RNA sequence: GGGAACGACUCGAGUAGAGUCGAAAAAGAUCGAUUACGAUCGAUCAAUGAUGCCCCUCACCCACCUCUGAAGAUCCCAGGUAGGCGAGGGAACGGAGCACGGGAUCACGAGCAGUACGCUGCUCGAAAAAGAACUAGACCUUCGGGUCUAGUUCAAGUAUCAAGGCAAGUUCGCUUGCCUUGAUACAAAAGAAACAACAACAACAAC
Reactivity to 2A3 in 0.01 (KOAc 150mM, MgCl2 10mM, bicine 150mM(pH8.5), 24C), signal-to-noise 1, nucleotides 027 to 156: a000g000a010u000c000g000a000u020u060a060c210g010a010u000c000g000a000u010c020a000a090u240g120a080u210g050c000c000c000c000u020c000a000c010c000c000a000c000c010u050c030u060g100a170a090g020a060u000c000c010c000a000g010g010u050a000g000g000c000g030a040g000g000g040a000a060c090g050g120a070g080c100a150c130g000g000g000a040u000c060a000c010g000a020g000c030a010g010u050a020c170g100c120u000g090c010u010c010g010a020a000a010a040a000g000a000a010c010u000a010g000a000c020c010u010u120c210g070g000g060u000c000u000a040g000u000u000c000a000a000